[RMDB]
An RNA of 177 nucleotides, treated with 2A3 and DMS and read out base by base. Reactivities are given for positions 27 through 126. Conditions: 150 mM KOAc, 10 mM MgCl2 and 150 mM bicine (pH 8.5), 24 C. It was measured as part of the RMDB library M2PK90.

RNA sequence: GGGAACGACUCGAGUAGAGUCGAAAAUACAAUAGCGUAGGGAACCAAGCUAAGAGGUUGGAAGUCCAACGGUAGAGGGCUUGGUUCGCAGCUGGUCUAGAAGAGGUCCCACUCCCUACGCCGCAAAUCUAACGCAACUAUUCGUAGUUGCGUUAGAAAAAGAAACAACAACAACAAC
Reactivity to 2A3 in 0.01 (KOAc 150mM, MgCl2 10mM, bicine 150mM(pH8.5), 24C), signal-to-noise 3, nucleotides 027 to 126: u210a020c070a040a100u060a140g000c010g010u010a010g010g010g000a000a010c000c010a000a020g020c020u060a080a040g060a050g160g140u050u010g020g070a280a160g170u170c020c000a020a000c020g040g070u140a080g040a140g100g140g000c000u010u010g010g000u010u000c000g010c000a000g010c030u070g040g040u060c030u030a080g010a160a020g020a120g010g020u030c000c000c020a020c020u030c000c010c000u010a010c000g020c000c020g040c070a100a130a020
Reactivity to DMS in 0.01 (KOAc 150mM, MgCl2 10mM, bicine 150mM(pH8.5), 24C), signal-to-noise 4, nucleotides 027 to 126: u010a100c170a110a060u020a090g020c010g020u000a020g000g010g000a030a020c020c000a020a020g000c020u010a080a110g010a140g020g000u000u000g000g010a300a170g010u020c010c010a000a010c020g040g020u000a130g020a140g010g000g010c010u000u000g000g010u010u000c020g020c110a050g020c050u000g000g000u010c070u010a080g010a100a080g000a020g010g010u010c020c000c000a200c040u000c030c020c010u010a000c060g000c010c110g020c220a060a070a080